[RMDB]
RNA sequence: GGGAACGACUCGAGUAGAGUCGAAAAGCGUCCUGGUUCGCCAGGACGCAAAUAAAUGGUAGACUGAGACCGUGUAACUCAGAUAACCAGAAAUAGACGGAAAAACUGACUUGUUCGCAAGUCAGAACUACCAAGAUGACUUCGGUCAUCUUGGUAGAAAAGAAACAACAACAACAAC
Reactivity to 2A3 in 0.01 (KOAc 150mM, MgCl2 10mM, bicine 150mM(pH8.5), 24C), signal-to-noise 2, nucleotides 027 to 126: g020c000g000u010c000c000u010g020g040u040u040c160g080c050c000a010g000g000a020c000g010c010a000a000a000u000a000a050a020u040g030g000u010a020g060a270c010u000g000a000g030a100c060c180g110u060g050u130a170a110c000u000c010a000g000a020u160a000a030c000c000a000g020a030a140a050u180a010g080a020c090g080g000a070a150a030a060a010c010u010g010a000c010u000u040g000u050u100c220g020c110a000a000g000u000c020a000g010a000a010
Reactivity to DMS in 0.01 (KOAc 150mM, MgCl2 10mM, bicine 150mM(pH8.5), 24C), signal-to-noise 2, nucleotides 027 to 126: g010c000g020u000c000c000u000g010g000u000u010c290g020c020c020a050g010g000a020c030g050c000a010a000a040u000a080a120a050u010g000g000u020a020g020a060c000u000g000a010g000a160c120c120g000u000g000u020a110a110c010u000c000a000g010a100u010a040a080c000c000a060g000a030a080a140u010a080g010a090c060g000g000a150a040a050a090a150c000u000g000a000c000u000u000g030u010u010c140g000c000a010a000g000u000c000a000g000a070a100